[RMDB]
RNA sequence: GGGAACGACUCGAGUAGAGUCGAAAAAGUCACCUAUUACGAUAGGUGACAUUUGCACCAGCGAACAAUUCAGUUGCGAGAUUCGAGGUUUCAGUCUGAAUCAUAGUAGCCAUUACGAUGGCUACAACUCACUCCCGACUGUUCGCAGUCGGGAGAACUAGAGUAGGGGGUUCGCCCCCUACUCUAGAAAAGAAACAACAACAACAAC
Reactivity to 2A3 in 0.01 (KOAc 150mM, MgCl2 10mM, bicine 150mM(pH8.5), 24C), signal-to-noise 1, nucleotides 027 to 156: a000g000u000c000a000c000c010u000a010u050u050a060c300g020a000u030a020g040g010u010g000a010c000a000u020u040u080g070c050a040c000c000a040g160c010g010a010a000c010a060a060u020u000c000a000g010u010u000g010c020g000a000g000a000u000u000c000g010a040g070g080u050u220u300c060a080g040u030c060u020g000a000a000u030c010a010u020a150g000u000a000g000c010c010a010u030u030a150c290g150a040u040g000g030c000u000a000c000a000a000c010u040c010a090c010u000c000c000c000g000a000c000u000g010u150u100c160g000c210a010g000u020c000g000g010g000a000g000a000a000

Chemical mapping of a 207-nucleotide RNA with 2A3. The RNA was probed in 150 mM KOAc, 10 mM MgCl2 and 150 mM bicine (pH 8.5) at 24 C. The 2A3 profile rests on 561 reads.